Record summary
An RNA of 207 nucleotides, treated with 2A3 and read out base by base. 2A3 adducts were read by reverse transcription with SuperScript II with manganese. The data come from the RNA Mapping Database (RMDB), library M2RFPK. Values cover nucleotides 27 to 156. Values are in units of 0.01, from 0 to 300, in steps of 10. Conditions: 150 mM KOAc, 10 mM MgCl2 and 150 mM bicine (pH 8.5), 24 C.
RNA sequence: GGGAACGACUCGAGUAGAGUCGAAAACGGUUACGCCUUCUUUACCGUUAUCAAGGAAGGUACUCGGCCAGGCUAAGGGAAGCAUUAUUCCUUAGGCGCAUGUCGCCGCCAGCAUGGUGUGAGGGGAAAAAGUAUGCUGGGUUCGCCCAGCAUACAACAAAGGUGACGUCUUCGGACGUCACCUUUGAAAAGAAACAACAACAACAAC
Reactivity to 2A3 in 0.01 (KOAc 150mM, MgCl2 10mM, bicine 150mM(pH8.5), 24C), signal-to-noise 1, nucleotides 027 to 156: c000g000g000u010u010a050c070g020c000c000u000u020c010u000u010u080a080c040c000g240u120u060a060u090c010a000a010g050g000a000a000g030g010u090a100c000u000c000g000g000c000c000a020g000g000c000u030a000a160g050g000g010a010a010g000c120a240u110u150a120u300u050c000c000u060u010a080g000g000c000g000c030a180u180g030u180c010g000c010c000g020c010c050a040g000c010a000u030g000g000u050g030u220g000a010g040g010g020g140a030a040a030a030a030g000u010a000u010g000c000u000g000g000g040u020u010c060g150c020c000c000a000g000c000a000u010a000c000a000a000